Structure probing data (2A3 and DMS) for a 177-nucleotide construct. For DMS, 1,066 sequencing reads were counted. The RNA was probed in 150 mM KOAc, 10 mM MgCl2 and 150 mM bicine (pH 8.5) at 24 C. Reactivities are rounded to 0.1 and cut off at 0 and 3. High DMS reactivity at an A or C suggests that its Watson-Crick edge is free. For 2A3 the reverse transcriptase was SuperScript II with manganese. Values cover nucleotides 27 to 126. It was measured as part of the RMDB library OK2TST.

[RMDB]
RNA sequence: GGGAACGACUCGAGUAGAGUCGAAAACAACCUCAACCAGCUCGCAGCGAUGGAAUCAGGGCGCACCGCCACCGGAGGCCCCACCGCCGGCAGCGAGGCCCCCUUGCAGGGAAUGACGGGGGGCCUGCACCCAGUCGACAUUCGUGUCGACUGGGUGAAAAGAAACAACAACAACAAC
Reactivity to 2A3 in 0.01 (KOAc 150mM, MgCl2 10mM, bicine 150mM(pH8.5), 24C), signal-to-noise 2, nucleotides 027 to 126: c000a000a040c000c050u080c000a070a110c020c010a040g030c010u040c070g030c030a030g000c010g040a080u100g000g040a060a030u090c110a130g020g100g010c050g000c070a030c020c050g170c080c010a070c080c000g020g060a030g080g000c020c000c010c020a050c000c000g050c000c050g080g000c000a000g000c000g030a020g020g000c000c000c000c000c000u020u070g000c060a080g070g090g220a230a220u120g010a050c010g010g000g000g010g000g010c000c000u000g000
Reactivity to DMS in 0.01 (KOAc 150mM, MgCl2 10mM, bicine 150mM(pH8.5), 24C), signal-to-noise 1, nucleotides 027 to 126: c240a080a170c060c020u000c050a080a120c020c050a130g020c000u000c060g050c060a110g020c050g080a080u010g010g000a110a110u020c090a080g000g000g020c050g000c040a140c060c030g000c000c090a150c030c010g030g010a110g020g000c050c060c030c040a070c030c030g010c030c000g000g020c130a090g040c050g030a060g030g020c000c000c030c000c000u020u000g040c000a040g060g000g020a140a030u000g010a040c070g000g000g000g010g010g000c000c010u000g000